An RNA of 207 nucleotides, treated with 2A3 and DMS and read out base by base. For DMS, 2,137 sequencing reads were counted. Reactivities are given for positions 27 through 156. The reactions ran in a buffer of 150 mM KOAc, 10 mM MgCl2 and 150 mM bicine (pH 8.5), at 24 C.
RNA sequence: GGGAACGACUCGAGUAGAGUCGAAAAAGGUGAUUUCUCCAGCACCUUUAUCAAUGGAGGAACUCGACUUUGCUGUGGGUCCCAAAGGGACCUUAGGUGCAGACAGUUACCGGCGGUGAAGUGUGAGCAUAGGUUCGUGUCUUCGGACACGAACCAACUGCUCAGAACAGUUCGCUGUUCUGAGCAGAAAAGAAACAACAACAACAAC
Reactivity to 2A3 in 0.01 (KOAc 150mM, MgCl2 10mM, bicine 150mM(pH8.5), 24C), signal-to-noise 3, nucleotides 027 to 156: a000g000g010u010g000a030u000u070u030c010u000c010c030a070g100c010a030c010c020u080u300u100a020u010c030a000a040u160g000g000a010g010g010a030a020c000u000c020g020a020c020u000u000u020g000c000u010g010u040g020g000g000u010c000c000c030a170a160a100g000g010g010a030c030c010u020u080a010g010g010u010g000c000a030g090a300c060a020g060u070u120a010c000c010g040g000c020g000g040u030g010a020a000g050u060g090u090g050a010g020c080a090u100a200g000g000u000u000c000g000u000g010u000c010u040u080c240g050g000a000c010a000c000g000a000a000c000c000a000a000
Reactivity to DMS in 0.01 (KOAc 150mM, MgCl2 10mM, bicine 150mM(pH8.5), 24C), signal-to-noise 1, nucleotides 027 to 156: a040g010g010u010g040a230u010u000u010c020u000c010c030a120g020c030a030c020c010u010u000u010a020u000c300a130a090u000g000g010a030g050g010a030a050c030u000c010g000a020c000u000u010u000g020c020u000g030u000g000g040g010u010c000c000c010a060a200a180g030g030g020a000c000c020u000u000a010g030g010u000g030c050a150g020a160c130a200g010u000u000a010c000c030g030g020c040g000g040u010g000a050a050g000u010g020u000g000a030g090c030a070u000a140g030g010u000u000c010g000u010g040u010c020u000u010c300g030g000a040c000a020c010g000a010a000c000c000a000a020